[RMDB]
RNA sequence: GGGAACGACUCGAGUAGAGUCGAAAAUCGUGCCCGUUCGCGGGCACGAGUCACCUACACCGCUUCCAGUCUGGGCCACUACCUCUCUUUGAGAUCUCAGUAUAUUUGGUCAGUUCGCUGACCAAAACCUUGACACUUGAUUCGUCAAGUGUCAAGGAAAAGAAACAACAACAACAAC
Reactivity to DMS in 0.01 (KOAc 150mM, MgCl2 10mM, bicine 150mM(pH8.5), 24C), signal-to-noise 2, nucleotides 027 to 126: u000c000g020u000g000c000c010c000g060u010u010c230g010c010g000g020g020c000a000c000g010a000g030u010c140a130c000c000u000a090c120a120c060c020g000c060u000u000c030c040a060g000u000c040u010g020g010g000c040c050a070c020u000a060c060c010u010c030u000c030u000u000u000g000a110g000a070u000c020u000c030a110g000u000a100u000a160u000u000u000g000g010u010c000a000g010u010u020c220g020c010u000g000a010c000c000a000a000a030a140
Reactivity to 2A3 in 0.01 (KOAc 150mM, MgCl2 10mM, bicine 150mM(pH8.5), 24C), signal-to-noise 2, nucleotides 027 to 126: u010c010g030u020g000c020c010c030g030u030u040c240g050c000g110g010g050c000a000c000g000a000g010u000c010a040c030c000u010a020c050a040c040c010g050c050u090u000c030c000a060g030u000c020u080g000g000g070c010c000a060c020u090a060c010c040u020c000u050c030u120u070u110g070a080g030a070u020c050u020c050a040g070u090a080u030a080u300u040u020g020g010u010c000a000g000u020u070c160g000c080u010g000a000c000c000a020a000a000a000